[RMDB]
RNA sequence: GGGAACGACUCGAGUAGAGUCGAAAAGGGCAAUACCGGGCCCGAUACCGGAAUUAGUAGUUUUCUACGAGAGGCCCAAUCUGCGGCCGAAUGCAGUGUAGGUCGAACCGAGGACCGAGACUCGAUAAUUACGUCGAUAGAUGGACGAUUACAUCAAGAUAAAUUACCACUUCGGUGGUAAUUUAUCAAAAGAAACAACAACAACAAC
Reactivity to DMS in 0.01 (KOAc 150mM, MgCl2 10mM, bicine 150mM(pH8.5), 24C), signal-to-noise 1, nucleotides 027 to 156: g000g000g050c020a090a160u020a070c060c000g000g000g030c000c000c110g010a090u000a060c020c000g010g010a110a090u020u000a110g010u000a070g000u000u000u000u000c000u000a030c020g000a170g020a300g000g010c050c020c000a070a160u000c050u000g000c050g010g000c000c190g000a120a090u000g010c080a120g000u000g030u020a140g010g000u010c010g000a110a100c030c030g000a260g010g010a090c030c060g010a160g010a100c020u000c020g000a080u000a020a090u000u000a110c070g010u010c010g030a120u000a080g010a050u000g010g000a160c060g000a140u000u010a020c060a100u020c020a020a300
Reactivity to 2A3 in 0.01 (KOAc 150mM, MgCl2 10mM, bicine 150mM(pH8.5), 24C), signal-to-noise 2, nucleotides 027 to 156: g000g000g000c010a000a030u030a140c010c000g000g000g030c040c030c010g050a020u010a030c000c000g010g050a140a090u120u020a090g020u010a020g040u020u060u190u250c000u040a060c010g000a040g020a180g180g020c030c000c030a020a070u090c030u080g020c060g020g000c020c040g050a070a010u210g000c050a010g050u020g010u100a020g000g000u000c020g000a050a040c080c040g000a120g140g000a050c000c000g000a020g020a020c000u000c050g020a020u100a150a040u220u140a040c020g010u020c000g050a100u100a170g150a080u130g050g090a050c010g000a010u000u250a020c160a120u080c080a170a000
The record gives the reactivity of an RNA of 207 nucleotides to DMS and 2A3.
2A3 adducts were read by reverse transcription with SuperScript II with manganese.
The reactions ran in a buffer of 150 mM KOAc, 10 mM MgCl2 and 150 mM bicine (pH 8.5), at 24 C.